[RMDB]
RNA sequence: GGGAACGACUCGAGUAGAGUCGAAAAUAUGCACAACUACCAAUAAUGGGAGAGCUGCAGUGGGAACAGGUAAGGAACCUUCAAUGGGACCGCUUCCAUCUUCCCGGAGUUCCGGCACCCGAUUCCCCAAGUGCUGGGGAUUCGUCCCCAGCACUUGAAAAGAAACAACAACAACAAC
Reactivity to DMS in 0.01 (KOAc 150mM, MgCl2 10mM, bicine 150mM(pH8.5), 24C), signal-to-noise 3, nucleotides 027 to 126: u070a000u010g010c010a040c030a090a030c030u050a060c050c000a090a190u110a090a100u010g020g000g000a020g000a220g000c180u000g000c070a050g000u020g010g020g000a100a110c100a060g000g000u020a120a110g000g020a030a120c020c020u020u010c230a090a080u040g000g000g000a160c030c020g000c140u000u010c040c020a070u040c170u000u010c000c000c000g010g000a120g020u020u040c030c070g000g010c170a080c030c010c010g000a250u000u000c010c000c000
Reactivity to 2A3 in 0.01 (KOAc 150mM, MgCl2 10mM, bicine 150mM(pH8.5), 24C), signal-to-noise 4, nucleotides 027 to 126: u220a010u070g030c000a010c000a190a110c020u130a120c010c030a100a220u220a190a120u300g030g020g000a110g030a000g040c100u030g000c030a060g060u050g030g040g010a050a060c020a060g030g000u080a060a030g070g040a020a020c030c000u090u090c090a170a300u180g000g000g030a010c010c020g000c010u130u020c010c000a040u010c040u070u080c000c000c010g000g020a020g000u040u020c040c030g020g020c040a090c000c000c000g040a130u010u010c010c020c010